[RMDB]
The record gives the reactivity of an RNA of 177 nucleotides to 2A3 and DMS. It was measured as part of the RMDB library M2PK90. 2A3 adducts were read by reverse transcription with SuperScript II with manganese. The 2A3 profile rests on 9,522 reads.
RNA sequence: GGGAACGACUCGAGUAGAGUCGAAAAGAAGAGAGCGUAGCACACACUCAGACUGUACGACAGUCUGACACACACCUACGCUAGAGCAUCGUGUGUGUGAUAUCGAUGUUGCACGAAGAUGAGGAAACGGUAGAGACAUAUUCGUAUGUCUCUACCGAAAAGAAACAACAACAACAAC
Reactivity to 2A3 in 0.01 (KOAc 150mM, MgCl2 10mM, bicine 150mM(pH8.5), 24C), signal-to-noise 5, nucleotides 027 to 126: g150a070a030g120a000g010a000g010c020g000u020a000g000c180a010c010a000c000a000c060u010c000a000g000a010c000u020g020u170a120c120g140a040c230a000g000u000c000u010g000a000c010a000c000a000c000a010c100c010u050a020c010g000c010u060a030g020a000g060c010a020u030c020g040u030g020u030g000u000g010u010g110a020u010a040u170c070g040a090u170g010u030u030g030c030a010c040g050a070a020g030a060u090g030a040g080g080a060a110a020
Reactivity to DMS in 0.01 (KOAc 150mM, MgCl2 10mM, bicine 150mM(pH8.5), 24C), signal-to-noise 6, nucleotides 027 to 126: g010a160a090g000a110g010a060g000c010g010u000a020g020c060a090c110a140c100a100c190u000c000a000g000a030c000u000g010u020a150c300g000a130c000a000g000u000c000u000g000a010c060a020c110a090c100a060c190c020u000a020c020g020c040u010a030g010a110g010c020a010u000c040g000u010g010u000g000u000g010u010g010a070u010a110u010c130g010a090u010g000u000u000g010c040a040c030g020a080a130g000a050u000g010a090g010g010a080a070a140
The reactions ran in a buffer of 150 mM KOAc, 10 mM MgCl2 and 150 mM bicine (pH 8.5), at 24 C.